[RMDB]
RNA sequence: GGGAACGACUCGAGUAGAGUCGAAAAGAAGGAUAGUUCGCUAUCCUUCAAACCCACCGAAAGGGAAAUGUGUUAGAUGCCCUCUAACACAUAAACCGGGCAAAACAGUACCGUUCGCGGUACUGAAGAGUAUAGGUUACUUCGGUAACCUAUACUCAAAAGAAACAACAACAACAAC
Reactivity to 2A3 in 0.01 (KOAc 150mM, MgCl2 10mM, bicine 150mM(pH8.5), 24C), signal-to-noise 5, nucleotides 027 to 126: g000a010a000g000g000a000u010a010g010u020u040c060g000c070u000a010u000c000c000u000u000c000a000a000a000c000c010c000a030c000c030g200a240a110a090g070g010g030a080a260a010u010g020u000g000u010u000a010g000a050u300g050c020c040c000u030c000u010a000a000c000a000c000a000u010a000a010a000c020c010g000g030g020c100a070a070a070a080c000a010g000u000a000c010c010g020u030u090c270g000c010g080g000u010a000c000u000g000a020a030
Reactivity to DMS in 0.01 (KOAc 150mM, MgCl2 10mM, bicine 150mM(pH8.5), 24C), signal-to-noise 5, nucleotides 027 to 126: g000a020a010g010g000a010u000a000g010u000u010c230g030c000u000a000u000c010c000u000u000c000a020a080a120c010c000c000a110c160c100g000a050a080a100g020g000g020a100a240a010u000g000u000g000u000u000a000g000a060u020g000c250c210c070u000c010u000a010a000c000a000c000a000u000a020a100a250c030c010g000g000g020c190a060a050a100a130c000a010g000u000a010c000c000g020u010u020c190g010c000g010g010u000a000c000u000g000a030a050